[RMDB]
RNA sequence: GGGAACGACUCGAGUAGAGUCGAAAAGAUAUGGAAGCCGUGUGGAGCCUGUCGGAAACGAUAAAGGCUAUGAAGCACAGGCUUCCUAAGUCAAAGUAACGACAGCUCUUCGGAGCUGUCGUUACAACUGACUAGGAAGGUUCGCCUUCCUAGUCAGAAAAGAAACAACAACAACAAC
Reactivity to DMS in 0.01 (KOAc 150mM, MgCl2 10mM, bicine 150mM(pH8.5), 24C), signal-to-noise 2, nucleotides 027 to 126: g010a050u000a300u010g000g000a020a020g000c030c000g010u000g010u000g000g020a020g090c000c000u000g000u020c000g010g010a160a070a150c030g010a030u000a060a090a030g030g020c000u020a110u010g010a220a240g000c000a020c010a090g030g040c000u010u000c000c000u010a010a040g010u010c020a080a140a160g000u000a010a010c010g000a000c000a000g000c000u000c000u000u000c210g030g000a030g030c000u010g000u000c000g010u000u000a010c000a120a120
Reactivity to 2A3 in 0.01 (KOAc 150mM, MgCl2 10mM, bicine 150mM(pH8.5), 24C), signal-to-noise 1, nucleotides 027 to 126: g010a020u080a040u110g020g000a010a010g000c020c000g000u040g000u010g000g010a010g000c010c040u030g010u010c000g030g060a110a050a020c030g030a040u070a200a300a000g010g000c000u050a300u080g000a000a010g000c000a020c040a010g000g040c010u000u010c010c000u020a010a010g020u030c020a020a190a110g020u010a000a000c010g020a000c010a020g000c010u040c040u160u300c300g040g000a000g000c020u040g010u010c000g000u000u010a000c000a000a000